The record gives the reactivity of an RNA of 207 nucleotides to 2A3. Reactivities are given for positions 27 through 156. The reactions ran in a buffer of 150 mM KOAc, 10 mM MgCl2 and 150 mM bicine (pH 8.5), at 24 C.
[RMDB]
RNA sequence: GGGAACGACUCGAGUAGAGUCGAAAAGAAGGUGAUCAUCGUCGCGAUGGCGCCUUUACUAUCUUCUACAUGGGUAUCAACUUAGGUGCGGCGCUUUCUGGUUUUGUCGUUGCCUGGGCCUAUACCAACUUUGGCCAUAAAGAAGUCAUCGAUGGUGCCUUGCAUCCGAUUUCGAUCGGAUGCAAGGAAAAGAAACAACAACAACAAC
Reactivity to 2A3 in 0.01 (KOAc 150mM, MgCl2 10mM, bicine 150mM(pH8.5), 24C), signal-to-noise 2, nucleotides 027 to 156: g070a000a000g020g000u000g170a200u060c000a000u020c010g300u230c070g090c120g100a010u000g000g000c010g000c000c000u000u000u040a000c000u030a010u020c030u090u060c060u100a100c010a120u010g060g000g050u130a040u110c040a140a020c010u040u120a000g130g000u000g030c010g020g010c030g000c000u010u220u110c110u160g150g000u170u090u230u130g020u000c000g060u080u150g030c020c030u010g030g000g000c020c010u030a040u030a010c000c000a060a090c060u030u050u100g020g000c000c000a030u100a060a160a010g040a120a020g030u000c000a020u000c010g120a090u080g000g060u050g030